[RMDB]
RNA sequence: GGGAACGACUCGAGUAGAGUCGAAAAGAUCCUGAAACCCAUGGAUGGUUGUCUUAAUCCCGGUGAACUGUUGGUUGUUCUUGGGAGACCAGGGUCAGGUUGUACUACGCUGCUAAAAUCCAUAUCAGCAUAUUUACCGGUUCGCCGGUAAAUAUGCAAAAGAAACAACAACAACAAC
Reactivity to DMS in 0.01 (KOAc 150mM, MgCl2 10mM, bicine 150mM(pH8.5), 24C), signal-to-noise 2, nucleotides 027 to 126: g010a030u010c030c010u000g000a010a180a220c040c010c020a040u030g030g050a070u000g000g000u030u000g000u010c090u010u030a120a180u000c010c020c010g000g060u040g020a090a120c140u030g000u020u000g000g000u010u000g010u000u000c020u000u010g020g000g010a140g000a180c110c020a030g000g000g020u000c010a120g030g020u020u000g000u000a090c060u030a170c130g020c040u000g040c050u060a080a070a080a080u040c020c000a100u050a150u030c160a130
Reactivity to 2A3 in 0.01 (KOAc 150mM, MgCl2 10mM, bicine 150mM(pH8.5), 24C), signal-to-noise 3, nucleotides 027 to 126: g020a010u080c000c020u070g030a120a090a110c030c000c000a120u090g050g000a060u070g040g020u130u060g080u040c060u040u140a060a040u070c000c000c000g040g060u060g030a050a060c030u050g080u050u050g200g150u140u050g000u000u010c000u040u100g020g000g000a100g030a010c000c020a030g050g010g000u030c010a010g110g020u040u020g050u050a040c030u000a000c060g050c080u110g000c030u060a190a050a050a020u020c030c030a030u000a080u130c050a040